RNA sequence: GGGAACGACUCGAGUAGAGUCGAAAAGAUAUGGAGCUGUACGACUGAUGACCUAGCUCGGAAACGAGCUAGCAAGGUUGGUACUGGCUCCUAAGUCAAACAGUUUUCCAGUUCGCUGGAAAACUGAGGAUGGAUAGAGGUUCGCCUCUAUCCAUCCAAAAGAAACAACAACAACAAC
Reactivity to 2A3 in 0.01 (KOAc 150mM, MgCl2 10mM, bicine 150mM(pH8.5), 24C), signal-to-noise 3, nucleotides 027 to 126: g020a000u040a060u170g000g010a000g040c020u010g020u020a010c000g090a040c090u060g140a300u140g000a230c000c010u010a010g000c010u000c000g000g010a050a080a000c000g000a000g000c010u000a000g000c020a150a290g090g030u090u190g280g030u030a030c110u120g100g000c000u040c000c000u000a010a010g010u000c020a070a090a160c010a000g010u000u000u010u030c000c010a000g020u040u110c300g110c130u000g000g000a000a010a010a000c000u010g010a050
Reactivity to DMS in 0.01 (KOAc 150mM, MgCl2 10mM, bicine 150mM(pH8.5), 24C), signal-to-noise 2, nucleotides 027 to 126: g000a030u000a300u000g000g000a010g020c000u000g020u000a020c010g000a030c000u000g010a080u040g030a090c300c000u010a010g010c000u010c010g000g000a110a060a220c010g010a010g010c000u000a030g040c020a030a040g000g030u000u000g060g030u000a000c010u020g070g020c020u000c000c000u000a000a080g000u000c040a160a190a280c010a000g020u010u000u000u000c000c000a000g000u020u030c260g000c000u000g000g000a000a000a000a010c000u000g000a030